RNA sequence: GGGAACGACUCGAGUAGAGUCGAAAAAUAGUGUUAUUCGUAACACUAUAUAUCCGAACUCAAGGAUUCGUUCCAGAGACAUCCAUGCUAGCAUGAAAGCAACUGAACAAGCGUUCGCGCUUGUUAAUCCUAGCGACUUAUUCGUAAGUCGCUAGGAAAAAGAAACAACAACAACAAC
Reactivity to DMS in 0.01 (KOAc 150mM, MgCl2 10mM, bicine 150mM(pH8.5), 24C), signal-to-noise 1, nucleotides 027 to 126: a010u000a030g020u000g000u000u000a010u000u010c180g020u000a000a040c000a000c000u000a000u010a080u000a120u030c120c020g000a040a050c000u010c020a140a150g000g000a020u010u010c000g000u000u000c040c030a110g040a150g000a090c120a040u000c080c050a050u000g020c070u000a040g020c020a070u000g000a070a060a090g010c090a070a040c150u010g000a070a010c000a010a020g000c010g020u000u000c280g050c010g000c000u010u000g000u010u000a000a070